[RMDB]
RNA sequence: GGGAACGACUCGAGUAGAGUCGAAAACUCAGCACCUGUCACCUCCGGAGAUAGUGGAGACGCAUCCCUAUGAGGCGCUGAGCCACGGAGUGCUGGCGUGGCUGGAAAAGAACUUGGACCGCUGCGACAUCAUUGAUCCGUUCGCGGAUCAAUGAUGAAAAGAAACAACAACAACAAC
Reactivity to 2A3 in 0.01 (KOAc 150mM, MgCl2 10mM, bicine 150mM(pH8.5), 24C), signal-to-noise 2, nucleotides 027 to 126: c020u000c000a000g000c010a050c040c050u060g010u040c000a000c020c030u010c000c000g060g000a150g050a090u050a020g190u270g040g020a070g070a110c110g070c140a130u040c020c010c000u000a030u060g110a080g020g000c020g010c110u170g120a050g000c000c010a000c000g000g000a000g010u090g010c130u010g040g000c000g000u010g070g000c020u030g020g070a030a090a010a030g070a040a050c040u050u060g060g020a040c000c000g040c090u110g010c060g050a030
Reactivity to DMS in 0.01 (KOAc 150mM, MgCl2 10mM, bicine 150mM(pH8.5), 24C), signal-to-noise 2, nucleotides 027 to 126: c060u000c000a050g040c010a100c070c030u030g000u010c000a100c110c010u000c040c040g000g000a100g030a050u000a040g010u010g020g010a050g010a190c210g020c130a160u010c000c010c040u000a030u000g010a110g000g000c040g030c180u010g000a240g030c000c040a120c030g000g010a070g020u010g040c100u000g020g010c040g050u000g000g020c010u000g000g000a100a040a120a020g000a060a070c090u010u010g010g010a100c070c030g010c030u000g000c080g020a210